Chemical mapping of a 177-nucleotide RNA with 2A3 and DMS.
Values cover nucleotides 27 to 126.
The reactions ran in a buffer of 150 mM KOAc, 10 mM MgCl2 and 150 mM bicine (pH 8.5), at 24 C.
RNA sequence: GGGAACGACUCGAGUAGAGUCGAAAAGUGGUGGGCCCAGGACCCGCGGCGGGCCUGGCGCGCGGCCACCUGCCACGUCACCAAAAUGUGCACGCGCACGCUCGGGGAGAAGCGCACGCGCGCCGUCCGGCUUCAAGAAGUUCGCUUCUUGAAGCCGAAAAGAAACAACAACAACAAC
Reactivity to 2A3 in 0.01 (KOAc 150mM, MgCl2 10mM, bicine 150mM(pH8.5), 24C), signal-to-noise 2, nucleotides 027 to 126: g020u020g000g030u020g030g000g000c040c000c000a020g030g060a300c070c050c030g060c150g250g040c060g050g020g020c000c000u000g000g040c090g000c000g000c010g090g020c010c010a000c000c000u000g000c010c000a040c040g050u070c030a180c140c010a050a010a010a130u200g030u090g040c010a010c060g000c000g030c000a010c020g000c000u040c030g070g020g050g030a060g020a060a010g010c000g000c040a000c060g030c010g000c010g000c000c000g030u000c040
Reactivity to DMS in 0.01 (KOAc 150mM, MgCl2 10mM, bicine 150mM(pH8.5), 24C), signal-to-noise 1, nucleotides 027 to 126: g000u000g010g020u010g010g030g030c180c000c030a070g010g000a150c010c030c020g010c140g030g000c080g000g000g010c060c030u020g000g010c140g000c090g000c010g010g000c060c060a100c040c020u000g000c000c000a020c000g010u020c120a140c040c100a090a080a140a030u000g000u010g030c050a070c050g000c090g040c110a120c040g000c050u010c170g000g000g010g050a210g000a090a080g000c020g000c080a110c030g020c020g000c010g000c010c040g010u000c120